[RMDB]
RNA sequence: GGGAACGACUCGAGUAGAGUCGAAAAACGCGGAGUACGCUCCGCGACAAAACUUCUUUCGACCCGCUAACCGAGACCUAUGGGUCGUUAAAUUACGUCUCUAUCUUACUCACAUAACAUCGCACAAAAAACGUGGUUCGGUUCGCCGAACCACGAAGUGACAACAAUUGUUCGCAAUUGUUGUCACAAAAGAAACAACAACAACAAC
Reactivity to 2A3 in 0.01 (KOAc 150mM, MgCl2 10mM, bicine 150mM(pH8.5), 24C), signal-to-noise 3, nucleotides 027 to 156: a000c010g000c000g010g010a010g000u030a020c120g030c060u000c010c000g010c010g040a000c000a000a090a010a020c070u120u080c010u020u220u060c010g010a000c010c050c030g020c190u140a010a010c020c020g010a000g010a010c000c010u030a080u200g000g000g000u000c000g030u030u000a010a030a020u190u070a000c000g000u000c010u000c010u000a120u120c020u090u100a050c030u080c060a060c020a080u150a160a050c040a100u160c140g050c120a040c080a060a160a020a100a060a040c050g000u000g010g000u020u010c000g000g000u030u030c080g040c050c010g000a020a000c010c000a000c000g000a010a000